[RMDB]
RNA sequence: GGGAACGACUCGAGUAGAGUCGAAAAACGCUCAUGAGUGUCAUGACGUGAUUGCGUACUGUCCUACAGUACGCAGGCCGCUUCUGUAGGACAGAGGCGUCACGUAGUCGGACUCACCGAUUAGCGAGGUGAGCAUUCUAUUCGUAGAGUGCUCACCAAAAGAAACAACAACAACAAC
Reactivity to DMS in 0.01 (KOAc 150mM, MgCl2 10mM, bicine 150mM(pH8.5), 24C), signal-to-noise 9, nucleotides 027 to 126: a120c020g010c010u000c010a020u000g010a250g020u010g010u000c010a020u000g000a020c000g020u000g000a030u000u000g050c000g020u010a100c010u000g000u000c030c020u000a050c000a000g010u010a020c150g020c010a040g010g020c270c120g000c020u000u000c000u000g000u000a030g000g010a210c000a000g010a070g020g010c010g010u000c010a010c000g010u000a010g000u000c030g000g000a250c180u010c200a150c030c010g000a030u000u000a020g010c010g010a160
Reactivity to 2A3 in 0.01 (KOAc 150mM, MgCl2 10mM, bicine 150mM(pH8.5), 24C), signal-to-noise 9, nucleotides 027 to 126: a000c010g000c000u010c000a010u020g020a030g290u290g180u190c010a010u020g010a000c000g010u000g010a020u080u300g000c020g040u130a130c000u000g010u020c010c000u010a010c000a000g010u030a020c100g000c000a000g070g170c070c060g000c020u020u000c000u010g010u010a020g000g030a010c000a000g020a020g020g000c000g000u010c000a000c000g000u000a010g010u000c010g020g030a110c040u030c210a160c020c010g020a020u020u020a000g020c020g010a040
The record gives the reactivity of an RNA of 177 nucleotides to DMS and 2A3. It was measured as part of the RMDB library OK2TRN. For DMS the reverse transcriptase was MarathonRT.